[RMDB]
An RNA of 177 nucleotides, treated with DMS and 2A3 and read out base by base.
For 2A3, 12,723 sequencing reads were counted.
For DMS the reverse transcriptase was MarathonRT.
The RNA was probed in 150 mM KOAc, 10 mM MgCl2 and 150 mM bicine (pH 8.5) at 24 C.
The data come from the RNA Mapping Database (RMDB), library M2PK90.
RNA sequence: GGGAACGACUCGAGUAGAGUCGAAAAUGUGUGCUCGAGAGCCUCCCUGUCCGACAGAGCUUUUAGAUCUUCUGAUCUUUCCCUGGAGGAUAUGGCUUAUGCUUCAAGCGAUUCUCGGAAUAAUUAACUAUAAGUGUUAUUUCGAUAACACUUAUAGAAAAGAAACAACAACAACAAC
Reactivity to DMS in 0.01 (KOAc 150mM, MgCl2 10mM, bicine 150mM(pH8.5), 24C), signal-to-noise 9, nucleotides 027 to 126: u010g010u010g020u010g010c020u000c040g010a080g010a100g010c030c120u000c130c010c030u000g010u000c020c010g010a200c060a040g000a060g000c300u000u000u000u000a020g010a010u000c010u000u010c300u010g010a020u000c000u010u000u000c020c010c000u000g010g000a270g000g000a020u000a030u010g010g010c210u000u000a060u000g010c050u000u010c060a070a050g000c020g000a080u000u000c020u000c010g010g000a080a080u010a070a090u010u010a060a200
Reactivity to 2A3 in 0.01 (KOAc 150mM, MgCl2 10mM, bicine 150mM(pH8.5), 24C), signal-to-noise 7, nucleotides 027 to 126: u160g070u010g030u070g030c010u020c040g110a100g000a000g050c010c010u010c020c000c010u010g030u000c010c010g020a020c020a020g050a040g020c000u060u120u040u060a020g010a020u010c010u250u060c160u300g010a020u000c000u020u020u010c000c010c010u020g030g000a010g020g000a010u010a030u050g040g000c010u100u070a110u200g030c010u050u110c060a040a030g010c020g100a130u090u010c020u020c020g020g040a100a050u190a130a100u210u120a090a050